[RMDB]
RNA sequence: GGGAACGACUCGAGUAGAGUCGAAAAAUCAACUAUCGCCUGUGGGUCAGCGAACCACCAUUGCCGGACUCAGUGAUCGACGUCGGUUUGCGCACAGAACCUAACCUUGAACUGCUGACCGAAAUGAGGAUAUCUAUAGCUUCGGCUAUAGAUAUCCAAAAGAAACAACAACAACAAC
Reactivity to 2A3 in 0.01 (KOAc 150mM, MgCl2 10mM, bicine 150mM(pH8.5), 24C), signal-to-noise 2, nucleotides 027 to 126: a000u050c030a000a080c020u060a020u130c030g030c040c040u040g020u120g090g020g040u010c020a020g000c010g030a010a040c030c020a010c000c010a070u010u110g060c050c020g050g000a050c000u010c080a060g030u030g120a130u120c060g060a060c050g040u070c020g030g000u040u060u050g030c060g000c010a040c010a060g020a030a030c020c020u020a020a040c030c060u030u050g050a030a020c020u110g000c000u020g030a040c000c010g050a030a060a070u110g020a040
Reactivity to DMS in 0.01 (KOAc 150mM, MgCl2 10mM, bicine 150mM(pH8.5), 24C), signal-to-noise 2, nucleotides 027 to 126: a120u000c060a090a100c080u000a080u000c070g000c050c020u010g020u000g010g000g000u010c010a050g010c030g020a100a100c080c040a090c050c120a070u000u020g020c040c000g020g000a100c080u000c050a050g010u010g000a090u000c080g000a080c130g000u010c100g000g010u000u000u000g020c060g020c080a060c060a080g000a070a050c040c020u000a110a100c070c050u000u020g000a070a060c100u000g000c020u000g000a060c050c040g010a050a060a060u000g000a210

An RNA of 177 nucleotides, treated with 2A3 and DMS and read out base by base. The data come from the RNA Mapping Database (RMDB), library OK2TRN. The RNA was probed in 150 mM KOAc, 10 mM MgCl2 and 150 mM bicine (pH 8.5) at 24 C. For DMS the reverse transcriptase was MarathonRT.